[RMDB]
RNA sequence: GGGAACGACUCGAGUAGAGUCGAAAAGGAUGAUCACGAUGGUGUAGAGCAUCAGGAUGGCCGUCAAGCCCACCAACCCAAGCUCUUCGCCGAACGCGGCGAUGAUGAAAUCGGUGGAUGCCGCGGGGUUAACAGGACGAUUCGUCGUCCUGUUAACAAAAGAAACAACAACAACAAC
Reactivity to 2A3 in 0.01 (KOAc 150mM, MgCl2 10mM, bicine 150mM(pH8.5), 24C), signal-to-noise 6, nucleotides 027 to 126: g080g010a060u120g010a030u100c050a020c120g100a100u210g030g070u060g020u080a060g030a020g070c020a050u070c020a020g040g030a100u020g020g050c030c000g080u110c060a060a040g000c010c010c000a010c010c020a030a100c010c000c030a010a020g010c000u000c020u030u030c000g000c000c010g040a190a040c090g010c050g080g000c030g040a040u060g030a030u080g030a080a050a060u180c090g050g020u050g070g030a070u150g000c000c000g000c010g000g050g000
Reactivity to DMS in 0.01 (KOAc 150mM, MgCl2 10mM, bicine 150mM(pH8.5), 24C), signal-to-noise 4, nucleotides 027 to 126: g000g020a070u010g000a060u020c090a060c130g000a120u030g030g010u020g010u000a060g010a170g020c030a030u020c090a120g000g030a070u010g000g030c070c040g000u020c090a120a180g000c060c010c020a060c060c060a090a120c020c010c040a160a140g010c030u000c000u000u000c000g000c010c000g000a130a100c220g010c030g010g000c000g000a030u010g010a060u050g000a040a060a180u040c150g000g010u020g010g000a080u030g010c020c060g000c030g000g000g000